[RMDB]
RNA sequence: GGGAACGACUCGAGUAGAGUCGAAAAUGACAAAAGGAGAGACAACAGAAAAUUACAUUCUUGAAAAACGUGUAAAAGGUAUGUCUCAUUUAUCCUUUUCAGCUGUUAUACAUGAUUUACAAAUUGACACAUAUGACACAGUGAUGAAAACAGGAUGCUCAAUAAGCCAUUUCGAUGGCUUAUUGAGAAAAGAAACAACAACAACAAC
Reactivity to 2A3 in 0.01 (KOAc 150mM, MgCl2 10mM, bicine 150mM(pH8.5), 24C), signal-to-noise 4, nucleotides 027 to 156: u120g040a020c040a010a080a020a020g120g020a140g000a000g020a030c020a060a020c020a050g150a090a180a030a020u040u020a000c000a010u080u100c060u090u130g080a070a050a030a040a050c070g000u020g000u030a000a030a040a000g100g030u130a190u130g000u030c000u000c000a010u020u050u030a030u030c000c000u050u000u000u010c010a020g000c020u010g050u110u050a100u050a100c040a070u070g090a110u150u200u110a060c080a030a140a140u130u130g080a050c030a010c010a100u090a050u170g030a010c020a000c000a040g020u050g120a210u030g000a080a020a000a010c030a000g000g020a010u040g000
Reactivity to DMS in 0.01 (KOAc 150mM, MgCl2 10mM, bicine 150mM(pH8.5), 24C), signal-to-noise 1, nucleotides 027 to 156: u000g020a160c070a070a040a060a120g040g030a150g000a090g040a000c020a140a190c070a300g010a050a210a070a120u000u000a010c010a090u000u010c050u010u010g000a170a060a080a030a080c110g040u010g000u000a030a020a130a000g000g020u010a050u000g000u000c020u010c040a300u000u000u020a120u000c000c000u010u010u000u010c000a070g000c000u040g060u000u000a150u000a050c010a300u000g000a130u000u000u010a300c160a050a100a110u000u000g000a040c000a110c040a040u000a060u000g030a010c110a050c050a030g030u000g020a050u000g000a020a020a020a000c150a080g000g020a020u000g010

The record gives the reactivity of an RNA of 207 nucleotides to 2A3 and DMS. The RNA was probed in 150 mM KOAc, 10 mM MgCl2 and 150 mM bicine (pH 8.5) at 24 C. DMS adducts were read by reverse transcription with MarathonRT.